Chemical mapping of a 177-nucleotide RNA with 2A3. Conditions: 150 mM KOAc, 10 mM MgCl2 and 150 mM bicine (pH 8.5), 24 C. For 2A3, 344 sequencing reads were counted. The data come from the RNA Mapping Database (RMDB), library OK1LIB.
[RMDB]
RNA sequence: GGGAACGACUCGAGUAGAGUCGAAAACUGUUCAUCGAUUAUUUCGGGUUGGGCAAACCGAUUGAAGGCGUGCAGUGGGCAGGGGUGGCGCUGACGCUUUCGGCAAUUUACCUCGGUUCGCUGAAACGGUAUCGGGUACCUUCGGGUACCCGAUACCAAAAGAAACAACAACAACAAC
Reactivity to 2A3 in 0.01 (KOAc 150mM, MgCl2 10mM, bicine 150mM(pH8.5), 24C), signal-to-noise 1, nucleotides 027 to 126: c020u010g050u190u180c030a190u040c010g000a000u070u050a170u080u210u020c010g080g040g000u100u000g000g090g000c050a020a050a130c020c000g060a040u030u300g000a000a000g060g000c010g050u210g130c070a070g000u020g000g000g040c020a100g000g000g000g000u070g050g000c000g000c080u020g000a050c040g000c000u050u050u000c000g000g020c030a030a000u130u050u220a110c010c010u000c000g000g000u000u000c020g020c020u050g010a100a060a070c000